Chemical mapping of a 177-nucleotide RNA with DMS and 2A3.
For 2A3 the reverse transcriptase was SuperScript II with manganese.
Conditions: 150 mM KOAc, 10 mM MgCl2 and 150 mM bicine (pH 8.5), 24 C.
It was measured as part of the RMDB libraries RFM100 and RFMREP.

RNA sequence: GGGAACGACUCGAGUAGAGUCGAAAAAGCUGAGUGCUACGGCACUCAGCAUUGGUGAAGCAAGGUGGCCUAGCAGAGUGUUUUCAACAAAGCUUGCACCCUGUCAGACCAUACUUGUUUUAACUAAUCCUUAUUAUUCGUUCGCGAAUAAUAAGGAAAAAGAAACAACAACAACAAC
Reactivity to DMS in 0.01 (KOAc 150mM, MgCl2 10mM, bicine 150mM(pH8.5), 24C), signal-to-noise 5, nucleotides 027 to 126: a070g010c000u000g020a010g020u000g010c000u000a080c220g030g000c010a000c000u000c000a000g010c000a010u010u000g000g020u000g000a060a100g000c010a010a010g000g030u000g000g010c020c000u000a090g010c000a020g010a050g020u000g010u010u000u000u000c040a050a100c300a110a120a120g010c090u000u000g000c010a000c010c020c000u010g010u000c040a030g010a030c000c000a010u000a080c010u000u000g000u000u000u000u010a070a060c050u000a060a160
Reactivity to 2A3 in 0.01 (KOAc 150mM, MgCl2 10mM, bicine 150mM(pH8.5), 24C), signal-to-noise 9, nucleotides 027 to 126: a000g010c000u000g000a000g000u010g000c000u030a080c270g110g000c000a000c000u000c000a000g010c010a000u000u100g000g000u010g010a010a000g000c000a000a000g010g010u000g010g000c000c010u010a010g000c000a000g010a020g010u030g010u030u080u070u110c110a160a170c050a140a260a020g020c020u020u030g000c010a000c000c000c000u010g030u040c020a010g000a010c000c000a030u120a300c120u000u020g000u000u020u010u020a030a010c010u030a040a030
DMS adducts were read by reverse transcription with MarathonRT.